[RMDB]
RNA sequence: GGGAACGACUCGAGUAGAGUCGAAAAAUGGCGAAUGCAUGGGGAACUACAUCUGUGUCGCGAGUUCGAUUCUCGCCAUGGCCUGGUCCUGUAGCUCAGUUGGUAGAGCAAGCUGUUCCCCGGACACAAAAUCCAGCUAGGUUCGCCUAGCUGGAAAGUAAAAGGACUGGUUCGCCAGUCCUUUUACAAAAGAAACAACAACAACAAC
Reactivity to 2A3 in 0.01 (KOAc 150mM, MgCl2 10mM, bicine 150mM(pH8.5), 24C), signal-to-noise 1, nucleotides 027 to 156: a000u100g010g020c040g020a110a030u210g020c090a070u100g000g030g000g040a030a050c080u120a050c170a170u210c120u030g060u040g060u110c040g000c000g030a000g000u000u110c060g040a040u100u000c010u000c000g000c040c030a020u040g020g000c000c130u030g010g010u070c010c010u030g090u090a030g000c020u020c060a140g060u200u130g050g130u110a030g010a000g000c000a010a010g010c080u030g060u020u000c040c000c000c000g030g000a060c050a030c020a030a170a010a010u000c010c000a000g010c000u000a000g030g000u030u040c080g050c050c000u000a000g000c010u000g000g000a000a000a010
Reactivity to DMS in 0.01 (KOAc 150mM, MgCl2 10mM, bicine 150mM(pH8.5), 24C), signal-to-noise 1, nucleotides 027 to 156: a090u010g030g010c050g020a120a080u010g010c020a060u000g000g000g030g000a030a110c020u010a090c050a110u020c070u000g040u020g000u000c020g020c010g000a040g010u000u000c050g000a300u000u050c000u010c020g050c000c020a120u000g000g000c020c050u000g000g000u000c050c030u000g000u010a080g010c030u000c000a200g050u010u010g050g010u000a120g040a110g050c030a090a060g000c030u000g060u000u000c000c000c030c050g000g030a130c010a090c040a050a080a130a080u000c000c010a000g000c010u000a030g000g010u000u010c300g030c000c000u000a010g000c000u000g000g000a000a000a080
Chemical mapping of a 207-nucleotide RNA with 2A3 and DMS. For DMS the reverse transcriptase was MarathonRT. High 2A3 reactivity points to a flexible backbone, as in loops and unpaired stretches. For 2A3, 669 sequencing reads were counted. 2A3 adducts were read by reverse transcription with SuperScript II with manganese. It was measured as part of the RMDB library M2RFPK. Conditions: 150 mM KOAc, 10 mM MgCl2 and 150 mM bicine (pH 8.5), 24 C. For DMS, 1,837 sequencing reads were counted.